[RMDB]
RNA sequence: GGGAACGACUCGAGUAGAGUCGAAAACACAUUCUAUUCGUAGAAUGUGGAACGUAGAGAGAUCGACAGCGUCGCAGCUAUGUCGAACGAGGAAGAGCGCGGAGGGAUCGGGCUUCGGCCCGAUCAAGCUAAUUCCUCUUUUCGAAGAGGAAUUAGCAAAAGAAACAACAACAACAAC
Reactivity to 2A3 in 0.01 (KOAc 150mM, MgCl2 10mM, bicine 150mM(pH8.5), 24C), signal-to-noise 5, nucleotides 027 to 126: c010a010c000a000u000u000c010u000a030u050u100c170g100u030a000g000a010a010u000g000u020g020g020a070a010c030g100u160a020g030a010g010a000g010a180u020c010g010a000c020a010g030c010g070u200c130g020c110a100g000c020u110a080u240g030u040c020g000a050a050c030g020a030g030g050a060a050g010a030g050c060g010c040g020g050a040g070g070g000a000u010c000g000g010g010c000u060u080c230g090g000c000c000c000g000a000u000c010a000a020
Reactivity to DMS in 0.01 (KOAc 150mM, MgCl2 10mM, bicine 150mM(pH8.5), 24C), signal-to-noise 8, nucleotides 027 to 126: c010a010c000a010u000u000c000u000a030u000u010c190g020u000a010g000a010a000u000g020u000g000g000a070a060c140g000u000a080g010a130g010a130g000a080u000c010g010a020c030a040g010c030g010u000c290g000c170a140g000c020u010a070u010g010u000c010g010a020a100c080g000a110g000g010a060a040g000a040g010c040g020c070g010g010a080g010g010g000a010u000c000g010g000g000c000u000u010c200g020g000c000c000c000g000a000u000c020a060a110
Structure probing data (2A3 and DMS) for a 177-nucleotide construct.
For 2A3, 8,743 sequencing reads were counted.
Reactivities are given for positions 27 through 126.
For 2A3 the reverse transcriptase was SuperScript II with manganese.
The DMS profile rests on 14,853 reads.
Conditions: 150 mM KOAc, 10 mM MgCl2 and 150 mM bicine (pH 8.5), 24 C.